Record summary: The record gives the reactivity of an RNA of 177 nucleotides to DMS and 2A3. DMS adducts were read by reverse transcription with MarathonRT. Values cover nucleotides 27 to 126. The 2A3 profile rests on 85,571 reads. It was measured as part of the RMDB library OK1LIB.
[RMDB]
RNA sequence: GGGAACGACUCGAGUAGAGUCGAAAAGACCUUAGAUUUGUUCCGAUAUGCAUGACCAUGUCGGAUCUUGGCUAAGGAAGGAUGGGCGAAUUUUCUAUGGUCAUGCAUGGGAACAAAUUCCAUCCUAGAUUGUUUAGAAUUUCGAUUCUGAGCAAUCAAAAGAAACAACAACAACAAC
Reactivity to DMS in 0.01 (KOAc 150mM, MgCl2 10mM, bicine 150mM(pH8.5), 24C), signal-to-noise 7, nucleotides 027 to 126: g000a160c040c020u010u020a060g000a020u000u000u000g000u010u000c000c000g020a150u050a010u000g000c010a010u000g010a020c010c000a020u010g010u020c220g000g000a010u010c010u000u010g000g010c030u000a080a080g010g010a140a070g010g000a030u010g010g000g000c030g020a030a030u000u000u000u000c020u030a040u000g000g000u000c010a010u010g000c000a000u010g000g000g000a000a010c010a000a010a010u000u010c070c060a040u000c010c000u000a210
Reactivity to 2A3 in 0.01 (KOAc 150mM, MgCl2 10mM, bicine 150mM(pH8.5), 24C), signal-to-noise 9, nucleotides 027 to 126: g100a030c010c020u040u120a030g000a030u010u000u010g000u000u000c010c020g070a190u070a000u130g000c010a010u010g000a000c000c000a020u040g150u280c050g000g010a010u010c010u010u040g130g000c010u050a060a060g080g030a030a020g040g010a040u040g020g010g000c010g010a010a010u000u010u010u000c020u020a010u010g000g000u000c000a000u000g000c000a000u010g020g000g000a000a000c000a000a000a000u040u000c020c010a040u040c000c000u010a040